[RMDB]
RNA sequence: GGGAACGACUCGAGUAGAGUCGAAAAUUUUUUGCCUUGAUGUCAUGGAACCUAAGAAAUUACUUUGUAGUUACUGAGUAUCUGAUCAAAACACAUUUUAUAGGACUUUUUGAAGGUCUGACUAUGGAGUCGUACUUUGUUUCGACAAAGUACGACUAAAAGAAACAACAACAACAAC
Reactivity to DMS in 0.01 (KOAc 150mM, MgCl2 10mM, bicine 150mM(pH8.5), 24C), signal-to-noise 2, nucleotides 027 to 126: u000u000u090u030u040u020g000c060c040u000u040g010a110u010g040u020c000a050u030g040g000a110a120c040c000u020a060a050g000a040a020a040u010u000a060c020u000u030u000g020u000a060g000u000u050a150c020u000g030a040g010u000a040u010c070u000g000a110u000c130a090a090a050a060c240a100c100a090u010u040u010u020a050u030a120g020g000a120c130u000u000u010u070u070g030a120a020g000g000u000c020u000g000a110c060u020a080u000g000g000
Reactivity to 2A3 in 0.01 (KOAc 150mM, MgCl2 10mM, bicine 150mM(pH8.5), 24C), signal-to-noise 3, nucleotides 027 to 126: u120u100u090u050u040u190g020c020c000u050u170g060a070u160g010u050c030a020u050g050g060a070a050c000c000u030a090a070g060a090a040a040u170u080a070c050u010u040u090g040u090a130g030u030u070a090c040u100g080a000g040u080a100u110c090u100g160a030u070c070a000a020a120a000c100a060c000a010u060u020u080u080a190u160a060g020g030a040c040u080u050u030u110u300g200a070a000g000g000u010c040u020g000a000c000u010a030u170g090g020